[RMDB]
RNA sequence: GGGAACGACUCGAGUAGAGUCGAAAAGGGGUCCUUCUUGUCAGUGGGUUAUUUACCUUGGAUUUACUGAAGCCUCCACGGUUGUCAGGUAUUCACCCACUUGGAUUUAGAAGGACGGAGGCACCCAAACGUGGUCUUUGUUCGCAAAGACCACGAAGAUAGAUGGAACCUUCGGGUUCCAUCUAUCAAAAGAAACAACAACAACAAC
Reactivity to 2A3 in 0.01 (KOAc 150mM, MgCl2 10mM, bicine 150mM(pH8.5), 24C), signal-to-noise 2, nucleotides 027 to 156: g070g010g030g010u040c010c020u020u010c000u030u070g110u080c020a010g020u030g010g020g010u100u300a200u170u210u080a050c040c030u100u190g180g000a090u300u300u220a040c030u060g020a080a000g030c010c000u020c060c040a030c040g020g020u020u010g010u110c010a000g000g000u010a050u060u110c110a010c010c000c020a010c030u010u060g080g000a000u110u110u140a000g000a000a000g000g000a000c010g000g000a040g040g030c020a040c010c000c000a000a140a020c000g000u000g010g000u010c000u000u010u040g050u030u170c220g000c150a000a000a000g000a020c000c000a000c000g000a000a000
Annotation: Conditions: 150 mM KOAc, 10 mM MgCl2 and 150 mM bicine (pH 8.5), 24 C. An RNA of 207 nucleotides, treated with 2A3 and read out base by base. The 2A3 profile rests on 906 reads.